[RMDB]
RNA sequence: GGGAACGACUCGAGUAGAGUCGAAAAAUGAUGUUUGGUGAACCCUUUUCAACACUUCUGUUCACCCACAUUAACUUGAUGGACCUUAUGGUUCGCAAGAAUAGUGUUGAAAGAGUUAGGUAAUGAGGUCAGAUUUAACAUUCGUGUUAAAUCUGACAAAAGAAACAACAACAACAAC
Reactivity to DMS in 0.01 (KOAc 150mM, MgCl2 10mM, bicine 150mM(pH8.5), 24C), signal-to-noise 4, nucleotides 027 to 126: a080u010g000a090u000g020u000u000u000g020g010u000g000a030a060c020c230c070u020u000u000u000c010a010a010c000a020c000u000u000c170u000g010u000u000c110a110c050c030c260a070c080a050u010u010a060a140c010u010u000g000a060u010g050g000a010c010c000u000u000a150u010g020g010u000u000c000g000c020a010a020g010a150a090u010a030g020u000g000u010u000g010a020a020a040g000a100g010u000u000a080g000g010u010a100a090u010g000a130g010
Reactivity to 2A3 in 0.01 (KOAc 150mM, MgCl2 10mM, bicine 150mM(pH8.5), 24C), signal-to-noise 4, nucleotides 027 to 126: a000u160g060a040u070g110u090u170u130g030g010u040g030a030a030c020c020c000u000u030u010u060c010a010a000c000a000c010u160u150c030u080g050u070u050c010a040c000c090c010a050c010a050u150u150a080a050c010u040u020g010a070u150g200g000a020c000c000u180u240a250u300g010g000u000u010c000g000c020a000a000g030a030a100u090a050g010u000g000u000u020g000a010a010a020g100a010g050u180u170a070g010g090u080a130a080u130g080a040g150